[RMDB]
RNA sequence: GGGAACGACUCGAGUAGAGUCGAAAAAUAGAGGGGGAGGUCAUAAGCGUCUAUACCGUAAAAUCGAUUUUCGACGGAAUGAAAAAGACAUAUAUGGUAGAAUCGUAACCAUAGAAUACGACCCUAACCUCUCUCUUAUUUUCGAAUAAGAGAGAGGAAAAGAAACAACAACAACAAC
Reactivity to 2A3 in 0.01 (KOAc 150mM, MgCl2 10mM, bicine 150mM(pH8.5), 24C), signal-to-noise 8, nucleotides 027 to 126: a010u220a040g040a080g000g010g000g000g010a060g010g000u000c010a050u030a170a050g050c020g020u000c020u020a080u050a070c030c000g040u060a040a040a020a130u120c050g070a090u060u050u080u080c040g030a010c030g030g070a090a070u070g080a090a100a020a030a000g060a020c050a010u210a000u010a000u060g010g020u020a020g140a140a110u110c080g050u060a020a010c000c000a010u010a020g040a030a030u100a080c050g030a070c000c010c000u020a060a080
Reactivity to DMS in 0.01 (KOAc 150mM, MgCl2 10mM, bicine 150mM(pH8.5), 24C), signal-to-noise 7, nucleotides 027 to 126: a080u030a080g010a100g010g000g020g000g000a130g000g000u010c040a050u020a080a150g010c080g010u010c020u000a090u020a110c060c010g020u010a070a070a090a120u020c090g000a140u010u000u010u010c090g000a050c070g000g000a130a050u040g010a030a060a050a080a060g010a050c090a040u030a110u000a000u000g000g010u000a080g010a080a080u030c120g010u020a070a070c040c010a060u000a040g010a080a080u020a060c100g000a110c010c000c010u000a070a100
Chemical mapping of a 177-nucleotide RNA with 2A3 and DMS.
As a SHAPE reagent, 2A3 marks flexible, mostly unpaired nucleotides at the ribose 2'-OH.
For 2A3 the reverse transcriptase was SuperScript II with manganese.
The RNA was probed in 150 mM KOAc, 10 mM MgCl2 and 150 mM bicine (pH 8.5) at 24 C.
For DMS the reverse transcriptase was MarathonRT.